Notes
An RNA of 177 nucleotides, treated with DMS and 2A3 and read out base by base. DMS adducts were read by reverse transcription with MarathonRT.
[RMDB]
RNA sequence: GGGAACGACUCGAGUAGAGUCGAAAACACGCUGUCAGCGAUGGCAGUGGUCAUGACUGGUAUAGACCCCCGAACUUGGACUGGAACUAUCUUCAGAUUAGGAUCUCUGGCCACUAGCUACAUGGGAGAUGUUACCAGCGUUCGCGCUGGUAACAUCAAAAGAAACAACAACAACAAC
Reactivity to DMS in 0.01 (KOAc 150mM, MgCl2 10mM, bicine 150mM(pH8.5), 24C), signal-to-noise 2, nucleotides 027 to 126: c070a180c010g000c030u010g000u000c010a070g030c300g030a230u050g000g000c000a000g000u000g000g000u020c160a010u030g000a080c020u010g020g000u070a150u030a000g000a150c050c060c030c090c000g000a070a220c140u010u000g000g000a010c070u030g000g010a090a090c070u000a020u010c070u060u030c190a110g000a020u000u000a110g000g000a090u000c010u000c100u020g000g000c060c030a020c090u040a030g000c040u010a080c070a080u000g000g070g110a030
Reactivity to 2A3 in 0.01 (KOAc 150mM, MgCl2 10mM, bicine 150mM(pH8.5), 24C), signal-to-noise 4, nucleotides 027 to 126: c090a010c030g010c010u020g030u060c020a060g010c020g080a050u000g020g000c000a000g040u020g040g040u020c000a020u090g130a060c050u030g010g070u100a030u060a150g110a100c000c000c000c000c050g050a070a050c070u040u120g030g100a110c030u060g030g070a070a080c020u040a080u100c020u150u060c050a040g020a280u090u070a060g090g050a070u020c000u020c020u060g010g010c010c040a020c010u040a020g050c020u030a020c030a100u130g040g040g040a100
The RNA was probed in 150 mM KOAc, 10 mM MgCl2 and 150 mM bicine (pH 8.5) at 24 C.
The 2A3 profile rests on 1,717 reads.
2A3 adducts were read by reverse transcription with SuperScript II with manganese.